[RMDB]
RNA sequence: GGGAACGACUCGAGUAGAGUCGAAAAACUGACGGUACGCCGUCAGAACGGUAGACAAGAUGGUUUGAAAACCACGCCUUCUACCAAUAUAGUAAAUAAAUAGGCGGAGCGGUCAUACGUGACCGCAAAAACAUAUUCAGCUUCGGCUGAAUAUGAACACUCAGGUGUCGUUCGCGACACCUGAGUGAAAAGAAACAACAACAACAAC
Reactivity to 2A3 in 0.01 (KOAc 150mM, MgCl2 10mM, bicine 150mM(pH8.5), 24C), signal-to-noise 2, nucleotides 027 to 156: a000c000u000g000a000c000g000g000u010a010c220g040c030c000g010u010c010a000g000a010a010c030g020g000u000a020g000a030c040a100a030g120a300u040g000g100u030u070u160g090a180a160a000a000c010c010a000c000g000c000c000u030u020c000u000a000c000c010a000a000u200a020u030a020g050u040a000a020a150u020a040a090a030u140a040g000g010c000g010g010a000g050c010g000g000u000c000a030u040a150c290g060u030g000a000c000c000g000c000a000a000a000a000a000c000a000u000a000u000u000c000a000g000c000u030u050c060g150g000c000u000g000a000a000u000a000u000g000a000a000